[RMDB]
RNA sequence: GGGAACGACUCGAGUAGAGUCGAAAAAGUAUCAGGUAAUAAUUUAUACGUAUACUACAUCGAGACCAAGAAGAACAUUGCUGAUGUGAUGACAAAACCUCUUCCGAUAAAAACAUUUAAACUAUUACAAGGUUGUAUGAUUCGUCAUACAACCUUGAAAAGAAACAACAACAACAAC
Reactivity to 2A3 in 0.01 (KOAc 150mM, MgCl2 10mM, bicine 150mM(pH8.5), 24C), signal-to-noise 1, nucleotides 027 to 126: a000g000u000a020u020c030a020g000g020u030a010a110u050a080a110u130u060u190a100u100a040c040g000u070a050u000a080c020u020a020c000a050u010c010g020a030g020a010c060c000a030a000g020a000a040g060a030a030c020a110u020u040g000c020u040g030a030u080g020u000g010a030u030g040a060c020a080a150a010a060c010c000u010c030u070u050c020c010g010a010u180a040a120a050a060a020c030a060u070u090u190a070a130a040c020u040a000u240u260a050
Reactivity to DMS in 0.01 (KOAc 150mM, MgCl2 10mM, bicine 150mM(pH8.5), 24C), signal-to-noise 2, nucleotides 027 to 126: a050g020u000a060u000c030a090g030g000u000a050a100u000a120a110u000u000u000a130u010a080c080g000u000a070u000a060c070u000a080c070a000u010c060g000a090g000a080c130c070a030a040g000a040a040g020a100a160c080a080u000u010g020c050u010g000a050u000g030u000g010a080u000g010a080c090a070a040a150a130c110c050u000c030u000u000c030c020g010a070u020a040a070a040a080a030c090a100u000u000u010a020a040a090c080u010a050u000u000a140